[RMDB]
RNA sequence: GGGAACGACUCGAGUAGAGUCGAAAACGCGGGUGGUUCGCCACCCGCGAAAUAAGAAUAUAGUGUUACUGAUCAACACUUUAAUCAAAGAUCACAAUAAAAAAACGGUCUACUUCGGUAGACCGAAGUUGAAUAGUGUGUUCGCACACUAUUCAACAAAAGAAACAACAACAACAAC
Reactivity to 2A3 in 0.01 (KOAc 150mM, MgCl2 10mM, bicine 150mM(pH8.5), 24C), signal-to-noise 2, nucleotides 027 to 126: c010g040c000g050g110g000u030g060g100u110u100c200g030c050c000a000c000c010c010g010c010g000a000a010a010u050a010a000g050a050a030u300a030u230a290g000u000g000u020u060a080c060u090g000a000u020c010a000a010c000a000c030u210u200u020a020a020u010c060a180a000a010g000a000u010c010a010c070a020a160u300a080a150a000a000a000a000a000c020g010g000u000c000u000a000c010u020u070c200g070g010u010a010g000a000c000c000g010a010a010
Source information
This 177-nucleotide RNA was probed chemically with 2A3. The reactions ran in a buffer of 150 mM KOAc, 10 mM MgCl2 and 150 mM bicine (pH 8.5), at 24 C.